[RMDB]
RNA sequence: GGGAACGACUCGAGUAGAGUCGAAAAGCCUACGAGAGCUUGAGGACACGACCAGCUGCUCCCUACCAAGUACCGACCAUAGGGGUGUAUGGCGUGCCAGGGUCAGGUAAAUCUGGCAUUAUUAAAACACAUAGUGACUGUUCGCAGUCACUAUGUGAAAAGAAACAACAACAACAAC
Reactivity to DMS in 0.01 (KOAc 150mM, MgCl2 10mM, bicine 150mM(pH8.5), 24C), signal-to-noise 3, nucleotides 027 to 126: g000c000c020u000a100c130g000a090g020a130g030c020u000u000g020a110g000g000a100c020a050c050g010a160c040c010a040g010c090u000g020c050u000c010c010c000u010a100c140c030a120a100g010u000a100c100c100g010a090c040c090a140u000a050g020g000g010g020u010g000u010a040u000g010g010c030g030u000g030c010c030a060g000g010g000u000c050a060g000g010u010a060a040a100u000c030u000g010g010c020a070u000u000a070u010u010a050a060a110a130
Reactivity to 2A3 in 0.01 (KOAc 150mM, MgCl2 10mM, bicine 150mM(pH8.5), 24C), signal-to-noise 2, nucleotides 027 to 126: g020c000c000u050a060c120g090a040g000a020g140c050u090u050g060a060g000g080a050c030a010c040g150a170c010c000a020g020c030u090g000c020u060c050c000c000u010a050c060c000a070a050g050u030a110c030c090g070a040c010c060a030u070a030g000g000g080g000u030g040u030a130u030g030g000c020g000u000g000c000c000a030g080g000g050u050c040a010g110g000u100a120a020a090u010c020u010g010g000c000a010u020u090a090u040u160a110a040a020a020

Notes: The record gives the reactivity of an RNA of 177 nucleotides to DMS and 2A3. The 2A3 profile rests on 2,085 reads. In probing experiments dimethyl sulfate is read out at A N1 and C N3, which are open when not base-paired. 2A3 is a SHAPE reagent: it acylates the 2'-hydroxyl of flexible nucleotides of all four kinds. The RNA was probed in 150 mM KOAc, 10 mM MgCl2 and 150 mM bicine (pH 8.5) at 24 C.